Chemical mapping of a 177-nucleotide RNA with DMS and 2A3.
Source: RMDB library TTRDES, as collected in RNAgym.
Conditions: 150 mM KOAc, 10 mM MgCl2 and 150 mM bicine (pH 8.5), 24 C.
The 2A3 profile rests on 37,407 reads.
[RMDB]
RNA sequence: GGGAACGACUCGAGUAGAGUCGAAAAGAUAUGGAGUAGGCUCCUUGAGGUGGUGGUCGGAAACGACCACCCACCAAUGAUGGGAGAACUACCUACUCCUAAGUCAAAACGCAUGUUCGCAUGCGAAUCCUAAUAUUAUGUUCGCAUAAUAUUAGGAAAAAGAAACAACAACAACAAC
Reactivity to DMS in 0.01 (KOAc 150mM, MgCl2 10mM, bicine 150mM(pH8.5), 24C), signal-to-noise 9, nucleotides 027 to 126: g010a040u000a300u010g000g000a020g020u010a000g000g010c000u000c010c000u000u000g000a300g010g030u000g010g040u000g000g010u010c000g020g000a060a070a150c000g010a010c000c000a010c150c060c060a000c010c000a130a120u010g010a120u000g000g000g000a020g000a070a060c170u020a300c040c020u000a010c000u000c000c000u000a010a060g000u000c030a110a060a130a210c020g010c000a000u000g010u010u020c230g020c010a010u000g000c010g010a100a120
Reactivity to 2A3 in 0.01 (KOAc 150mM, MgCl2 10mM, bicine 150mM(pH8.5), 24C), signal-to-noise 7, nucleotides 027 to 126: g010a010u050a030u110g000g010a010g000u010a000g000g030c010u010c030c000u040u070g080a030g010g000u010g010g010u010g000g000u010c010g010g000a030a030a010c000g000a010c000c000a020c020c010c000a000c000c000a060a300u300g170a080u170g010g010g000a020g030a070a040c080u170a080c020c010u000a000c000u000c000c000u000a030a010g020u010c030a030a020a110a120c010g000c010a000u020g020u120u160c300g000c160a000u000g000c010g030a020a130